Notes
This 207-nucleotide RNA was probed chemically with 2A3 and DMS.
RNA sequence: GGGAACGACUCGAGUAGAGUCGAAAACCGUAGGUAAUCUACAAAGAGCAAUGAUGUAUGAGGAACCGUGACCUUCGAAAGAGGGUCACUCAGUACUCAUAUUGAGCUCAAAAAGGAUUACCUAAACGGAAAACGUCCUUUGUUCGCAAAGGACGAACACAAGAACCUGGUUCGCCAGGUUCUUGUGAAAAGAAACAACAACAACAAC
Reactivity to 2A3 in 0.01 (KOAc 150mM, MgCl2 10mM, bicine 150mM(pH8.5), 24C), signal-to-noise 2, nucleotides 027 to 156: c000c000g020u010a010g000g000u000a010a000u000c020u050a120c150a140a240a020g010a010g000c040a170a300u150g010a020u060g030u000a000u010g000a000g040g000a020a000c000c000g000u000g000a000c000c000u000u000c010g090a180a110a100g000a020g000g000g010u000c000a010c000u010c000a000g000u000a000c000u000c000a000u000a000u000u010g010a000g000c000u000c030a070a050a000a020a030g040g000a000u010u010a000c000c000u010a060a080a010c010g050g010a010a030a040a130c000g010u010c000c000u000u000u000g080u080u090c300g030c170a020a000a000g000g000a000c010g000a030a020
Reactivity to DMS in 0.01 (KOAc 150mM, MgCl2 10mM, bicine 150mM(pH8.5), 24C), signal-to-noise 1, nucleotides 027 to 156: c000c000g070u000a010g020g010u000a000a030u000c030u000a150c090a120a200a300g020a010g030c020a110a080u000g030a050u000g000u000a000u000g010a010g020g000a160a180c200c300g020u000g010a000c030c000u000u000c000g010a180a080a300g000a000g000g000g000u000c000a000c000u010c000a090g010u000a240c010u000c020a040u010a000u000u000g000a030g010c000u000c000a010a010a180a280a200g010g010a020u000u000a000c000c040u010a010a020a140c030g020g010a080a010a080a100c020g010u000c000c010u010u000u000g010u010u000c300g020c040a010a030a060g050g000a020c010g000a040a150

Values are in units of 0.01, from 0 to 300, in steps of 10. The RNA was probed in 150 mM KOAc, 10 mM MgCl2 and 150 mM bicine (pH 8.5) at 24 C. 2A3 is a SHAPE reagent: it acylates the 2'-hydroxyl of flexible nucleotides of all four kinds. For DMS, 2,789 sequencing reads were counted.